[RMDB]
RNA sequence: GGGAACGACUCGAGUAGAGUCGAAAAUAGCUAGGUCCAUGCUCGAGCAGACGUAUACUAGCAUGCUCAUGGCACGAUCCAUGCGUGAGUACUGAUCCGGAUCUCACAUGUCAUGACUCAUGGAUCACAACCAUGCCCAUUUCGAUGGGCAUGGUUGAAAAGAAACAACAACAACAAC
Reactivity to 2A3 in 0.01 (KOAc 150mM, MgCl2 10mM, bicine 150mM(pH8.5), 24C), signal-to-noise 3, nucleotides 027 to 126: u150a000g030c010u020a050g080g030u000c040c020a070u050g000c020u040c080g130a090g020c030a040g040a200c080g060u090a040u050a230c020u010a020g030c030a040u070g010c010u040c000a020u020g080g010c050a010c150g040a010u000c000c010a000u030g000c040g000u000g020a000g020u050a110c040u060g060a200u090c070c090g010g030a100u050c020u030c030a030c010a090u150g110u130c060a090u170g060a140c020u000c080a060u060g000g000a010u000c010a000
Reactivity to DMS in 0.01 (KOAc 150mM, MgCl2 10mM, bicine 150mM(pH8.5), 24C), signal-to-noise 2, nucleotides 027 to 126: u000a050g000c040u010a080g060g000u000c050c040a080u010g010c020u000c230g000a080g000c060a110g000a080c230g000u000a090u010a180c120u000a040g030c040a130u000g010c020u000c010a060u010g000g000c000a130c300g020a040u000c020c010a030u000g010c090g010u010g000a020g040u020a160c050u000g000a080u010c160c060g010g000a110u000c030u010c030a030c130a100u010g010u000c130a030u010g000a120c170u010c040a060u000g020g020a020u010c010a240